[RMDB]
The data come from the RNA Mapping Database (RMDB), library M2PK50. The record gives the reactivity of an RNA of 177 nucleotides to DMS. For DMS, 737 sequencing reads were counted.

RNA sequence: GGGAACGACUCGAGUAGAGUCGAAAAGAAGAUGUGUUCGCACAUCUUCAAAAGCAACGACUAGGACCGGCGAGACUAAGGACCGAUAGCUAAUCGCGACGAAAACAGGCCUCUUCGGAGGCCUGAACUUUAGAUGGGGGUUCGCCCCCAUCUAAAGAAAAGAAACAACAACAACAAC
Reactivity to DMS in 0.01 (KOAc 150mM, MgCl2 10mM, bicine 150mM(pH8.5), 24C), signal-to-noise 1, nucleotides 027 to 126: g010a000a010g000a000u000g010u000g000u010u010c220g030c000a010c010a010u000c000u000u000c000a030a080a070a150g000c100a140a070c050g010a030c040u000a070g010g000a040c000c040g000g000c050g040a130g000a090c170u010a090a040g030g000a100c180c000g000a020u010a020g000c050u010a050a100u000c010g000c040g000a090c120g000a090a110a090a290c010a000g020g000c000c000u000c010u000u000c160g030g000a010g020g000c000c000u000g010a010a010
About this RNA: The RNA was probed in 150 mM KOAc, 10 mM MgCl2 and 150 mM bicine (pH 8.5) at 24 C. Values cover nucleotides 27 to 126.